[RMDB]
RNA sequence: GGGAACGACUCGAGUAGAGUCGAAAACACAGAAUCUUCGGAUUCUGUGAAAGGAACAAAAACAUGCAAAAGUUCCAAAAAGCAUGAAGGUCAAAAGUCCAAAAACACAUCGCUUCGGCGAUGUGAACUAUAAGGUUUGGUUCGCCAAACCUUAUAGAAAAGAAACAACAACAACAAC
Reactivity to 2A3 in 0.01 (KOAc 150mM, MgCl2 10mM, bicine 150mM(pH8.5), 24C), signal-to-noise 3, nucleotides 027 to 126: c010a000c000a000g020a010a010u000c010u040u070c140g120g000a000u000u020c010u010g000u000g000a000a000a000g040g000a040a010c040a030a150a040a010a010c010a000u030g000c020a000a060a120a030g040u080u030c040c000a030a210a020a010a000g000c010a010u030g040a110a050g090g010u100c060a070a130a050a090g040u070c030c040a040a060a010a100a010c010a000c000a000u010c000g000c000u030u070c230g100g020c000g000a000u000g000u000g000a000a010
Reactivity to DMS in 0.01 (KOAc 150mM, MgCl2 10mM, bicine 150mM(pH8.5), 24C), signal-to-noise 4, nucleotides 027 to 126: c010a000c010a010g000a020a000u000c000u000u000c170g020g020a020u000u000c000u000g010u010g010a030a070a100g000g010a070a050c060a030a080a070a140a150c030a020u000g000c040a060a090a100a110g000u000u000c020c040a030a040a050a130a080g010c030a000u000g000a140a090g000g000u000c060a030a050a090a120g010u020c020c070a070a050a070a150a160c000a000c000a000u000c000g020c010u000u000c170g040g010c000g010a000u000g010u000g010a020a080